[RMDB]
RNA sequence: GGGAACGACUCGAGUAGAGUCGAAAAGAUGCGUCAGUAUCCCUGAUUCACAAUACCGGGUGCGCCGGGGCCACCUAUAACCAGAAGCGUAAGGCUAAGACCAACCUCCGGCUGCAAGCUGAGGCCCAGCAAACUGAUUAUUCGUAAUCAGUUUGCUAAAAGAAACAACAACAACAAC
Reactivity to 2A3 in 0.01 (KOAc 150mM, MgCl2 10mM, bicine 150mM(pH8.5), 24C), signal-to-noise 4, nucleotides 027 to 126: g060a060u050g020c020g070u020c040a010g030u080a190u130c020c000c040u020g030a070u080u110c050a020c010a130a130u050a170c040c020g020g020g030u050g020c040g000c020c000g000g020g000g060c000c010a010c000c040u100a070u060a180a040c040c000a050g060a210a020g050c050g050u110a100a040g060g000c040u080a090a000g040a090c030c030a000a050c000c020u010c010c010g010g000c020u060g030c020a040a070g040c010u020g010a060g010g040c010c000c000
Reactivity to DMS in 0.01 (KOAc 150mM, MgCl2 10mM, bicine 150mM(pH8.5), 24C), signal-to-noise 4, nucleotides 027 to 126: g000a090u000g000c070g020u000c040a040g020u010a190u020c110c110c010u000g000a070u000u000c080a090c110a130a120u000a090c080c060g000g020g000u000g010c070g010c020c020g010g010g000g010c080c040a060c080c040u020a110u010a060a070c110c060a100g000a100a070g000c080g010u010a110a090g010g010c030u000a090a070g010a100c050c050a060a100c160c010u010c030c020g010g010c030u010g020c050a050a090g000c030u000g000a090g000g000c020c030c040
Chemical mapping of a 177-nucleotide RNA with 2A3 and DMS. The DMS profile rests on 3,648 reads. The RNA was probed in 150 mM KOAc, 10 mM MgCl2 and 150 mM bicine (pH 8.5) at 24 C. DMS adducts were read by reverse transcription with MarathonRT.